[RMDB]
RNA sequence: GGGAACGACUCGAGUAGAGUCGAAAAGAGCAAUUCACCCAAGCAAAAUGGGCAGAAUUGGUUGUGACAACUGCAGAGCAGCGCGCAGCAGUCGGGAACCGAGUGUAAGGAUCGAUGAGGAAGAUCCCAAGCUGUGUCAGUUCGCUGACACAGCUUGAAAAGAAACAACAACAACAAC
Reactivity to DMS in 0.01 (KOAc 150mM, MgCl2 10mM, bicine 150mM(pH8.5), 24C), signal-to-noise 2, nucleotides 027 to 126: g000a100g020c030a010a010u000u020c040a300c000c010c010a040a090g000c210a030a050a180a180u000g030g000g020c100a150g010a000a020u000u000g000g010u000u030g030u000g000a070c090a110a080c070u000g020c000a090g000a200g010c040a040g010c050g020c090g010c030a050g010c050a020g010u000c050g010g000g000a120a100c060c060g020a090g020u000g000u000a070a130g020g020a040u000c020g000a110u020g000a160g000g010a050a160g010a010u000c010c020
Source: RMDB library OK2TRN, as collected in RNAgym. Chemical mapping of a 177-nucleotide RNA with DMS. For DMS the reverse transcriptase was MarathonRT. The DMS profile rests on 1,398 reads. Reactivities are given for positions 27 through 126. The reactions ran in a buffer of 150 mM KOAc, 10 mM MgCl2 and 150 mM bicine (pH 8.5), at 24 C.